[RMDB]
RNA sequence: GGGAACGACUCGAGUAGAGUCGAAAAUUCGCUCCCCAGCUUCCGCUCGUAAGACGGGGAUCAAGCGGAGUCAAACCUAAACGAGAUCGUGUGGACGCUUCGGCUUGGAGAUCGAAACACUAAAUUGAAUCAAGCUAGUUUAUUCUUCGCGUGUCUGCUACACCUAAAGGUUCGCCUUUAGGUGUAGAAAAGAAACAACAACAACAAC
Reactivity to 2A3 in 0.01 (KOAc 150mM, MgCl2 10mM, bicine 150mM(pH8.5), 24C), signal-to-noise 4, nucleotides 027 to 156: u030u010c000g000c010u020c030c010c000c000a050g020c020u020u000c030c030g050c030u010c020g010u020a030a020g050a060c020g000g010g020g020a020u110c210a070a010g020c000g010g030a020g070u140c080a050a050a130c000c020u120a040a020a000c020g000a030g000a050u070c030g010u020g010u020g050g020a020c040g000c010u030u010c040g070g020c030u010u020g040g020a030g000a020u090c020g020a010a030a010c050a030c030u050a030a040a130u300u270g040a010a010u050c010a020a000g010c010u020a070g040u070u200u150a170u200u060c100u120u170c050g030c030g080u090g070u050c040u030g030
Reactivity to DMS in 0.01 (KOAc 150mM, MgCl2 10mM, bicine 150mM(pH8.5), 24C), signal-to-noise 3, nucleotides 027 to 156: u000u000c010g010c020u000c000c000c000c010a110g030c030u000u000c000c000g020c090u000c060g020u010a070a020g000a100c030g010g020g020g000a170u000c090a080a090g020c010g010g010a050g020u010c110a060a120a090c010c010u000a090a110a110c030g000a180g000a090u000c020g010u000g030u000g010g000a300c140g030c040u000u000c020g010g000c050u010u020g020g000a060g000a090u020c050g000a300a100a060c030a110c040u030a090a060a100u000u000g000a050a070u000c010a030a080g020c020u010a060g010u000u000u000a080u040u010c030u000u000c010g020c110g000u010g020u000c040u000g000